The record gives the reactivity of an RNA of 207 nucleotides to 2A3. Values cover nucleotides 27 to 156. The RNA was probed in 150 mM KOAc, 10 mM MgCl2 and 150 mM bicine (pH 8.5) at 24 C. For 2A3 the reverse transcriptase was SuperScript II with manganese.
[RMDB]
RNA sequence: GGGAACGACUCGAGUAGAGUCGAAAAGUCCUUCCUCGCGCCCGCAGGACCACCCCUCGCCCCCUUUGCGCUGUCGCUUCGGCUACUUCCCGGUGGAAACAACUGAAGCUACCGAGAACCGCUUUUUCUCUAUCUUACUUGCUUCGGGGCGAGGGUGCUCAAUCAGAGAGUUCGCUCUCUGAUUGAGAAAAGAAACAACAACAACAAC
Reactivity to 2A3 in 0.01 (KOAc 150mM, MgCl2 10mM, bicine 150mM(pH8.5), 24C), signal-to-noise 1, nucleotides 027 to 156: g000u000c000c000u000u070c020c000u060c020g070c010g100c080c100c040g070c080a030g000g020a010c000c000a030c020c050c020c020u000c000g000c000c000c000c040c000u030u140u090g000c060g000c030u040g010u020c040g000c040u000u020c050g020g020c000u050a050c010u110u020c000c020c030g170g000u280g050g010a040a120a010c050a060a000c060u050g020a000a000g040c000u000a010c000c020g030a010g070a010a020c010c000g060c160u080u060u000u110u000c000u010c000u050a060u100c010u160u080a110c060u120u120g020c000u040u050c000g000g000g000g000c000g000a000g030g000g000u010g000